Chemical mapping of a 177-nucleotide RNA with DMS. The data come from the RNA Mapping Database (RMDB), library TTRINS. DMS adducts were read by reverse transcription with MarathonRT. Values cover nucleotides 27 to 126.

RNA sequence: GGGAACGACUCGAGUAGAGUCGAAAAGAUAUGGAGCACUGGAGACGUGCCGCGGCACCAUAGACAGCUACUCGGAAACGAGUAGUCGAGGUGCCGCGGGCACGUCGUUGAAAGUGCUCCUAAGUCACAUUUGCACUAACUUCGGUUAGUGCAAAUGAAAAGAAACAACAACAACAAC
Reactivity to DMS in 0.01 (KOAc 150mM, MgCl2 10mM, bicine 150mM(pH8.5), 24C), signal-to-noise 3, nucleotides 027 to 126: g010a050u000a300u000g000g000a010g010c000a010c000u000g040g000a070g000a020c000g030u000g030c020c000g050c050g010g000c010a010c000c010a300u000a160g010a060c300a100g000c010u020a000c000u000c040g000g010a170a130a190c010g030a000g010u000a000g020u000c040g000a050g030g050u000g010c010c000g020c040g020g010g010c000a000c000g020u000c000g030u000u000g000a130a170a010g000u000g000c010u000c000c000u000a000a120g010u000c020a300